[RMDB]
RNA sequence: GGGAACGACUCGAGUAGAGUCGAAAAAUUAGAUCUGGACAGGGAGUUUGAGAUUCUCUUUACCAUGUCUUGAGAUCUCAUAGUUAAUUCCUAGUUUCCAUUUUUAAUCUGGGCAAAAUAGGCUCUGGAUUAAUAUAACUUUCGAGUUAUAUUAAUCAAAAGAAACAACAACAACAAC
Reactivity to DMS in 0.01 (KOAc 150mM, MgCl2 10mM, bicine 150mM(pH8.5), 24C), signal-to-noise 4, nucleotides 027 to 126: a050u000u000a020g000a010u000c020u000g020g020a030c090a280g000g010g010a050g010u000u000u010g010a020g010a050u010u010c020u000c000u000u000u000a070c050c130a100u000g000u000c030u010u000g000a020g010a030u000c000u000c030a060u000a130g010u000u010a080a110u000u000c000c000u000a120g010u000u010u000c000c010a040u000u010u000u010u000a020a030u000c060u000g010g000g010c010a060a080a080a160u000a110g010g010c020u000c010u000g010
Reactivity to 2A3 in 0.01 (KOAc 150mM, MgCl2 10mM, bicine 150mM(pH8.5), 24C), signal-to-noise 2, nucleotides 027 to 126: a000u030u030a010g010a000u000c010u020g000g000a000c010a040g000g040g000a010g030u000u060u140g030a020g000a050u300u050c010u000c000u050u040u040a080c080c070a080u170g000u000c000u000u040g010a010g000a000u000c010u000c010a040u060a080g060u020u250a120a050u090u020c000c000u010a030g010u040u110u040c000c000a000u010u030u020u020u080a020a050u050c030u050g000g040g000c010a050a080a300a270u080a160g230g000c020u040c050u070g130
The record gives the reactivity of an RNA of 177 nucleotides to DMS and 2A3. It was measured as part of the RMDB library OK2TRN. 2A3 adducts were read by reverse transcription with SuperScript II with manganese. Values are in units of 0.01, from 0 to 300, in steps of 10. 2A3 is a SHAPE reagent: it acylates the 2'-hydroxyl of flexible nucleotides of all four kinds.